The record gives the reactivity of an RNA of 177 nucleotides to DMS and 2A3. For DMS the reverse transcriptase was MarathonRT. The 2A3 profile rests on 1,246 reads. 2A3 adducts were read by reverse transcription with SuperScript II with manganese. High DMS reactivity at an A or C suggests that its Watson-Crick edge is free. The RNA was probed in 150 mM KOAc, 10 mM MgCl2 and 150 mM bicine (pH 8.5) at 24 C.

[RMDB]
RNA sequence: GGGAACGACUCGAGUAGAGUCGAAAACUCAAGUUCUUCGGACACCGCAUCGGCUUAGCAAAGAAGAGCGUCCUGGUGGGACUUGCCGUCCUCUCCUUGGUGCUUGUCCCAGUAGGCCUCGUGGGAGGUCGGUAAGGUGUUUCGACACCUUACCGACAAAAGAAACAACAACAACAAC
Reactivity to DMS in 0.01 (KOAc 150mM, MgCl2 10mM, bicine 150mM(pH8.5), 24C), signal-to-noise 1, nucleotides 027 to 126: c030u010c030a120a160g000u000u010c060u020u020c060g020g010a110c060a080c020c050g030c110a090u010c110g030g010c030u010u010a100g000c060a050a120a130g010a070a080g000a030g000c110g020u010c000c000u000g040g040u000g000g010g010a020c020u000u000g000c070c150g000u010c040c030u000c160u000c090c040u010u010g060g000u000g000c010u000u000g010u000c000c010c070a050g000u030a020g000g010c020c010u000c030g030u010g000g000g000a050g020
Reactivity to 2A3 in 0.01 (KOAc 150mM, MgCl2 10mM, bicine 150mM(pH8.5), 24C), signal-to-noise 1, nucleotides 027 to 126: c020u020c020a030a030g110u100u000c010u070u050c080g040g040a050c010a020c070c020g050c030a100u070c030g000g000c020u030u010a050g040c040a060a140a090g100a120a000g010a070g010c020g060u150c010c000u060g000g090u020g000g020g000a020c000u030u060g000c040c020g110u120c010c040u070c060u030c030c060u100u120g000g020u040g010c030u020u030g000u060c040c000c030a120g130u040a020g030g000c040c000u040c050g000u140g030g110g050a040g080